[RMDB]
Source information
Source: RMDB library TTRINS, as collected in RNAgym. An RNA of 177 nucleotides, treated with DMS and read out base by base. The RNA was probed in 150 mM KOAc, 10 mM MgCl2 and 150 mM bicine (pH 8.5) at 24 C.
RNA sequence: GGGAACGACUCGAGUAGAGUCGAAAAGAUAUGGAGGGAAGGGCAAGAUGCGACAACAGCACUACGUAACAUCAAUCGGAAACGAUUGUGGUAGUGACAUGUCGCGCUUGCCCUUCCCUCCUAAGUCCUUGACUACUUACUUCGGUAAGUAGUCAAGAAAAGAAACAACAACAACAAC
Reactivity to DMS in 0.01 (KOAc 150mM, MgCl2 10mM, bicine 150mM(pH8.5), 24C), signal-to-noise 3, nucleotides 027 to 126: g010a110u010a250u000g010g010a040g010g010g000a030a000g000g010g020c000a000a010g000a050u010g050c020g010a010c000a030a100c300a260g000c000a010c000u000a020c000g000u000a070a170c200a070u000c000a000a000u010c000g000g000a160a110a210c000g020a030u000u000g020u000g010g000u000a000g010u000g010a050c110a210u000g010u000c000g000c010g000c000u000u000g000c020c010c000u000u010c000c000c000u000c000c000u000a010a080g020u000c060